The record gives the reactivity of an RNA of 207 nucleotides to DMS and 2A3. For DMS the reverse transcriptase was MarathonRT.
RNA sequence: GGGAACGACUCGAGUAGAGUCGAAAACUGCAUCACCUGAUCACUGAUGGCUCAACGGUAUCCGGCGAUACAACUGAAUACUUGUAGCUGCCUUUUGAGCGGGUUGGCUGCAAUCCGAAACGGAGAGAAAACCUAAUUACGUUCGCGUAAUUAGGAACGAGGGGUAUAAGUUCGCUUAUACCCCUCGAAAAGAAACAACAACAACAAC
Reactivity to DMS in 0.01 (KOAc 150mM, MgCl2 10mM, bicine 150mM(pH8.5), 24C), signal-to-noise 1, nucleotides 027 to 156: c060u010g010c020a100u000c020a030c040c010u040g020a070u000c040a030c070u010g000a070u000g040g050c010u000c030a080a070c020g000g000u010a000u000c010c000g000g020c020g020a250u000a080c170a140a090c010u000g030a050a030u000a020c050u000u000g000u010a040g020c020u000g020c010c000u000u000u030u020g020a080g010c080g050g010g000u010u010g030g040c030u000g000c000a040a140u000c030c020g040a040a090a080c060g000g010a050g000a300g010a040a060a120a120c000c000u010a010a000u000u000a010c000g030u000u000c300g080c050g020u000a000a010u000u000a000g010g010a010a020
Reactivity to 2A3 in 0.01 (KOAc 150mM, MgCl2 10mM, bicine 150mM(pH8.5), 24C), signal-to-noise 4, nucleotides 027 to 156: c020u030g010c000a010u020c000a010c010c010u010g010a030u030c020a000c040u030g020a050u060g040g000c000u010c000a040a030c050g030g010u080a070u040c030c030g050g020c100g080a030u120a220c100a140a080c210u150g060a110a050u110a100c050u050u070g030u050a010g000c010u010g000c000c000u030u030u040u030g040a030g030c030g010g030g000u150u250g040g000c010u000g020c000a000a070u020c030c020g040a110a160a210c150g090g000a030g020a000g010a060a120a030a030c000c000u000a000a000u000u000a000c000g020u040u060c190g000c010g060u010a000a000u000u000a000g010g000a000a010